[RMDB]
RNA sequence: GGGAACGACUCGAGUAGAGUCGAAAACUUGCUCAUCCCCUUCUGAAAGGGGGUGAUAAAAAUGACAGCAUAUGAAACAAUCUCUUUAAUGAUUGCUUUUGGCAUGCUGAUUGCCAUGUUGUCAGAGGAUGUGCAAACAGUUCGCUGUUUGCACAUCAAAAGAAACAACAACAACAAC
Reactivity to 2A3 in 0.01 (KOAc 150mM, MgCl2 10mM, bicine 150mM(pH8.5), 24C), signal-to-noise 1, nucleotides 027 to 126: c000u030u110g050c030u000c010a020u000c020c020c020c000u000u000c100u180g220a180a040a030g000g000g000g000g000u010g010a000u080a010a070a010a020a020u010g000a010c000a000g000c000a010u060a020u300g040a040a030a000c000a000a010u000c030u050c000u110u290u230a210a100u210g000a010u000u000g010c090u000u000u080u000g000g000c000a020u040g070c120u250g110a170u150u000g010c000c000a020u010g000u000u000g020u000c000a000g000a010g000
Reactivity to DMS in 0.01 (KOAc 150mM, MgCl2 10mM, bicine 150mM(pH8.5), 24C), signal-to-noise 2, nucleotides 027 to 126: c020u000u010g030c230u000c000a000u000c000c000c000c000u000u010c290u010g000a110a090a050g000g000g000g020g030u000g000a000u000a000a070a070a130a130u000g000a000c000a010g010c000a010u000a120u000g010a010a020a030c000a040a020u000c000u000c240u000u010u000a140a070u000g010a030u000u000g020c030u000u000u000u010g000g010c020a010u010g010c300u020g000a130u000u000g000c000c000a150u000g010u000u000g010u010c000a010g000a200g020